The record gives the reactivity of an RNA of 177 nucleotides to DMS. The DMS profile rests on 2,064 reads.

[RMDB]
RNA sequence: GGGAACGACUCGAGUAGAGUCGAAAAGAUAUGGAGUGAUUGCGAGCUCGUGUCGGAAACGACACUGAGCGAUGAGCAAUUCACUCCUAAGUCAAACAAUGUGGGGGGCUUCGGCCCCCCACAUUGACCAUACGGUGUACUUCGGUACACCGUAUGGAAAAGAAACAACAACAACAAC
Reactivity to DMS in 0.01 (KOAc 150mM, MgCl2 10mM, bicine 150mM(pH8.5), 24C), signal-to-noise 2, nucleotides 027 to 126: g010a010u010a020u010g000g000a030g040u000g020a050u000u010g030c010g050a080g000c010u000c010g000u000g000u010c000g000g000a010a010a030c000g020a010c000a010c010u000g040a010g020c000g010a050u020g010a300g000c000a000a000u020u020c000a000c000u000c000c000u000a000a080g010u000c000a180a140a270c020a010a000u000g020u000g010g020g050g000g000g000c000u000u000c220g070g050c000c010c000c020c000c020a000c000a000u000u000g000a220
Conditions: 150 mM KOAc, 10 mM MgCl2 and 150 mM bicine (pH 8.5), 24 C.